[RMDB]
RNA sequence: GGGAACGACUCGAGUAGAGUCGAAAAGGCAUCCACCUCUGCCCACUUCUGCAAGCCGUACACGAGCAGAUCCUCGAUGAUGUUCAUUAUGGCGCUGUCGAAGACGUCGUCGCCUGACUGUGUGUGCCCGUCGUCACUCCUUCGGGAGUGACGACGGAAAAGAAACAACAACAACAAC
Reactivity to 2A3 in 0.01 (KOAc 150mM, MgCl2 10mM, bicine 150mM(pH8.5), 24C), signal-to-noise 1, nucleotides 027 to 126: g000g010c050a040u000c000c090a000c000c000u030c050u100g030c000c000c000a100c000u020u010c000u080g080c010a100a060g020c000c090g080u050a000c000a040c060g020a000g060c000a000g000a100u040c000c010u060c060g000a010u020g010a030u020g040u090u080c050a070u180u060a110u170g060g060c000g000c080u010g000u020c020g010a020a000g030a020c000g010u000c020g000u010c000g020c010c000u020g050a060c020u110g050u000g020u020g050u010g130c020
Source: RMDB library OK1LIB, as collected in RNAgym. Structure probing data (2A3) for a 177-nucleotide construct. The RNA was probed in 150 mM KOAc, 10 mM MgCl2 and 150 mM bicine (pH 8.5) at 24 C.